[RMDB]
RNA sequence: GGGAACGACUCGAGUAGAGUCGAAAAUAAAUGAGCGUACAGCACACUCAGACUGUACGCUAUCUGAGUGUGUCAACUUCAAAGUCCAACGACACACACAUGGCGUUGGAACAAGAGUGUGAGAAAACUCAACAUGUUGCUUCGGCAACAUGUUGAGAAAAGAAACAACAACAACAAC
Reactivity to DMS in 0.01 (KOAc 150mM, MgCl2 10mM, bicine 150mM(pH8.5), 24C), signal-to-noise 3, nucleotides 027 to 126: u000a060a080a090u020g010a050g020c080g010u000a070c090a170g010c030a060c020a040c030u010c020a050g000a060c040u010g010u000a060c110g030c050u000a020u000c040u000g000a060g050u000g030u010g000u010c060a070a060c040u010u000c080a070a120a160g020u000c020c030a000a010c000g010a020c010a010c070a110c260a090c240a110u000g000g000c030g010u010u000g000g010a020a000c030a040a160g000a020g010u000g010u000g020a080g010a060a050a090a060
Reactivity to 2A3 in 0.01 (KOAc 150mM, MgCl2 10mM, bicine 150mM(pH8.5), 24C), signal-to-noise 3, nucleotides 027 to 126: u190a000a070a090u130g080a030g040c050g030u060a040c020a020g000c010a010c010a010c030u010c010a000g050a090c020u070g040u180a040c100g030c030u000a010u000c010u010g010a010g010u020g000u020g040u060c030a030a010c020u060u080c030a040a080a010g020u020c010c010a000a010c000g020a010c000a000c010a010c000a000c010a180u070g040g000c000g010u010u000g020g030a020a020c030a070a020g050a010g030u080g000u050g040a040g070a040a110a030a020